Source: RMDB libraries RFM100 and RFMREP, as collected in RNAgym.
Chemical mapping of a 177-nucleotide RNA with 2A3 and DMS.
Conditions: 150 mM KOAc, 10 mM MgCl2 and 150 mM bicine (pH 8.5), 24 C.

[RMDB]
RNA sequence: GGGAACGACUCGAGUAGAGUCGAAAAAAGUUUUUAAAAGAAUACGAUGAUAUUAUUUGCGUUUCAAAUCGAACAAUUCUUCUCGGAGCGAUCUGAGGUUUUAAUGGAGAUAGCGGUUCCUGCGCAAAUUCAGACUACGUUUCGACGUAGUCUGAAUAAAAGAAACAACAACAACAAC
Reactivity to 2A3 in 0.01 (KOAc 150mM, MgCl2 10mM, bicine 150mM(pH8.5), 24C), signal-to-noise 2, nucleotides 027 to 126: a000a000g100u110u090u030u030u030a120a230a000a010g070a070a010u090a140c130g060a060u130g030a060u060a020u130u260a080u040u230u010g020c000g030u000u000u080c080a060a040a050u050c030g040a050a000c040a080a030u050u020c000u010u000c020u010c000g040g000a070g070c090g030a050u030c010u040g010a030g020g000u010u050u070u190a050a080u090g050g000a030g000a010u030a020g010c070g040g000u050u010c000c060u060g040c010g010c000a040a130
Reactivity to DMS in 0.01 (KOAc 150mM, MgCl2 10mM, bicine 150mM(pH8.5), 24C), signal-to-noise 2, nucleotides 027 to 126: a080a080g000u040u000u000u020u030a050a100a180a080g020a040a010u010a030c040g000a130u020g020a140u020a060u000u000a060u010u000u000g010c050g020u000u000u010c170a030a060a070u040c070g010a160a070c160a100a120u010u010c020u020u030c000u010c010g010g010a020g000c300g000a110u000c000u010g000a040g010g000u020u000u010u000a060a050u010g020g000a080g010a050u000a070g010c030g010g000u010u000c070c030u030g010c010g030c050a020a030